[RMDB]
RNA sequence: GGGAACGACUCGAGUAGAGUCGAAAACUCUCCCCUUGCCCUAGGCUCUGGCCGUUGCGCCCGGCGGGGUCAACUCCAUGAUUAGCAUGGAGCUGUAGGAGUCUAAAUUGGGGACGCAGAUGUUUGGGCAGGUUAAAGAUUUCGAUCUUUAACCUGCAAAAGAAACAACAACAACAAC
Reactivity to 2A3 in 0.01 (KOAc 150mM, MgCl2 10mM, bicine 150mM(pH8.5), 24C), signal-to-noise 4, nucleotides 027 to 126: c010u020c030u020c000c010c000c000u010u160g040c020c010c000u010a030g000g000c020u010c000u040g230g190c020c000g050u030u070g020c010g060c060c010c010g010g000c010g010g010g000g000u010c010a020a030c010u000c000c000a010u010g020a280u160u270a090g090c000a000u000g040g000a000g000c010u040g010u060a040g000g040a020g000u010c020u040a080a190a120u120u100g010g000g010g020a020c090g020c010a010g050a140u090g080u080u060u070g040g040
Reactivity to DMS in 0.01 (KOAc 150mM, MgCl2 10mM, bicine 150mM(pH8.5), 24C), signal-to-noise 2, nucleotides 027 to 126: c040u020c060u000c000c000c000c000u020u020g020c070c120c090u000a020g000g060c020u010c030u000g040g060c050c010g040u020u000g000c080g000c050c030c020g000g010c050g000g000g000g000u020c020a070a140c000u000c000c000a000u000g030a300u000u030a150g000c000a010u000g000g000a020g010c060u020g010u000a110g000g000a060g000u030c010u020a050a110a090u030u010g020g030g000g010a020c090g000c090a030g010a060u010g000u000u010u010g000g020